[RMDB]
RNA sequence: GGGAACGACUCGAGUAGAGUCGAAAAGAAAAACAGGAAGAACCUUUGCUCUCAUACACCCCAUUGUAUUGGGUGGUUUGUUCUUUUAUACAUUGUGGGCAGGUUACUUAGGAUGUCCUCAAAGAAACCCGAUCAUAAUCUUCGGAUUAUGAUCGGGAAAAGAAACAACAACAACAAC
Reactivity to 2A3 in 0.01 (KOAc 150mM, MgCl2 10mM, bicine 150mM(pH8.5), 24C), signal-to-noise 1, nucleotides 027 to 126: g040a030a120a000a000a000c040a000g000g110a020a050g040a030a030c000c040u010u080u220g000c020u000c000u000c000a000u110a120c020a110c000c050c000c060a140u040u210g050u140a160u040u200g050g000g000u030g110g010u000u090u140g000u030u140c130u000u080u010u010a140u000a100c000a010u040u040g000u030g000g000g000c000a000g020g000u000u150a080c010u000u060a040g180g000a000u070g000u150c000c000u140c020a110a000a000g150a090a040a000
Reactivity to DMS in 0.01 (KOAc 150mM, MgCl2 10mM, bicine 150mM(pH8.5), 24C), signal-to-noise 1, nucleotides 027 to 126: g010a040a100a060a200a030c170a140g030g080a030a040g000a000a070c000c000u010u000u030g000c000u000c000u000c090a090u010a080c100a040c000c010c000c190a140u170u040g040u000a110u000u120g000g000g020u000g000g000u040u000u020g060u000u040c040u030u000u090u000a210u000a030c000a060u000u110g020u000g000g000g060c000a050g000g020u000u000a150c090u120u030a050g040g000a140u000g000u000c000c000u030c070a060a030a090g010a000a190a280